The record gives the reactivity of an RNA of 207 nucleotides to 2A3. The 2A3 profile rests on 1,622 reads. Reactivities are given for positions 27 through 156.
RNA sequence: GGGAACGACUCGAGUAGAGUCGAAAACGCGAUGGAUACGUCCAUCGCGAAUCCGUCCAAGCCGCGGACGUUAAACUGUGGCACGGUUGUGCCUAGGUGCAACCCUGCUCGACAUGGCGGCACCCCUGCCCAAGCUACCGUCUACGGACGGUAGCAAAGUCGGGUAAUGAUUCGUCAUUACCCGACUAAAAGAAACAACAACAACAAC
Reactivity to 2A3 in 0.01 (KOAc 150mM, MgCl2 10mM, bicine 150mM(pH8.5), 24C), signal-to-noise 1, nucleotides 027 to 156: c000g010c000g020a000u000g010g020a010u030a100c270g090u010c000c000a000u000c000g000c000g000a000a000u010c030c000g000u000c000c000a060a030g000c000c000g000c000g000g000a000c010g010u010u020a020a020a040c040u090g000u120g040g010c010a000c000g000g020u010u040g010u050g000c030c020u100a190g010g030u020g000c000a010a000c000c000c020u000g000c010u050c070g130a050c020a070u150g040g000c010g000g030c000a070c010c000c000c000u070g020c030c000c000a050a030g000c010u000a010c000c010g010u000c000u010a020c190g070g000a000c010g000g000u000a000g000c000a000a000